[RMDB]
RNA sequence: GGGAACGACUCGAGUAGAGUCGAAAACUGUGUGGCCUCUGAGGGUCUCUAGCUCUGCUCUGGCUUUUCAUGACAGAAGAGACAAUCUCUGGAGCAUGAUAUGGUCACGUUAGAGACAGGAAAACUAAAGCACAAAAGAAAACAUUCAUUGCAGGUACCACUAUUAAUCAUUCGUGAUUAAUAGUGGAAAAGAAACAACAACAACAAC
Reactivity to DMS in 0.01 (KOAc 150mM, MgCl2 10mM, bicine 150mM(pH8.5), 24C), signal-to-noise 3, nucleotides 027 to 156: c030u000g000u010g020u000g030g020c020c020u000c030u010g010a170g010g000g030u000c020u000c010u000a060g030c060u000c040u000g010c060u020c040u000g030g020c020u010u000u000u000c040a070u010g000a130c070a170g010a220a070g000a040g010a160c120a100a120u000c010u000c020u000g010g020a250g000c000a020u000g000a060u010a040u010g030g000u000c030a060c090g000u010u000a050g010a060g030a050c010a110g010g010a080a050a060a140c060u010a030a050a100g000c010a050c040a040a090a090a120g000a090a050a080a080c050a090u010u010c050a130u010u000g000c020a060g000g000u000a160
Reactivity to 2A3 in 0.01 (KOAc 150mM, MgCl2 10mM, bicine 150mM(pH8.5), 24C), signal-to-noise 7, nucleotides 027 to 156: c020u020g010u020g020u040g090g020c020c030u050c090u120g060a100g060g070g010u000c000u000c010u020a020g010c010u020c050u110g030c030u030c040u040g020g000c000u060u070u070u040c020a020u050g060a060c010a010g110a170a040g010a100g040a060c090a120a180u050c010u000c000u020g060g040a090g100c020a020u030g020a010u040a030u190g020g010u020c020a010c050g000u010u030a010g000a000g000a000c000a000g070g050a040a110a020a020c070u100a110a030a030g010c010a010c020a040a080a020a010g100a030a080a030a030c030a040u130u190c030a040u070u200g060c040a020g060g030u060a050